[RMDB]
RNA sequence: GGGAACGACUCGAGUAGAGUCGAAAACAUCGCGGCGGUACCGGGGAUCACGCGCGAAUCAGGGCGUAGUCAAGGUGAUUUCGAAUACCAGAUGCUCUACGGCGUCCGCGACGACGAACAACGACGAUGACUCUCUGUAAUUCGUUACAGAGAGUCAAAAAGAAACAACAACAACAAC
Reactivity to 2A3 in 0.01 (KOAc 150mM, MgCl2 10mM, bicine 150mM(pH8.5), 24C), signal-to-noise 3, nucleotides 027 to 126: c020a020u010c000g000c000g020g020c030g040g000u050a060c030c030g010g010g030g000a020u030c000a000c050g060c020g010c030g080a020a130u190c050a080g090g140g000c020g020u050a060g080u090c050a050a050g080g030u040g060a070u050u070u100c090g060a060a010u030a070c010c000a020g010a070u110g060c010u000c040u090a080c040g050g020c010g050u070c020c010g030c010g010a000c020g020a010c020g000a060a020c020a020a010c030g080a010c020g030a040
Reactivity to DMS in 0.01 (KOAc 150mM, MgCl2 10mM, bicine 150mM(pH8.5), 24C), signal-to-noise 6, nucleotides 027 to 126: c100a100u010c030g010c020g000g000c180g020g010u000a060c060c050g010g010g010g000a020u010c040a040c040g000c030g000c040g020a100a110u000c210a130g000g000g020c010g030u000a100g020u020c110a130a100g000g010u000g000a040u000u000u000c080g010a130a130u000a040c040c020a150g000a080u000g000c040u000c090u020a140c120g000g000c010g010u010c010c020g010c020g020a040c050g000a090c100g010a070a090c100a030a070c050g010a080c140g000a160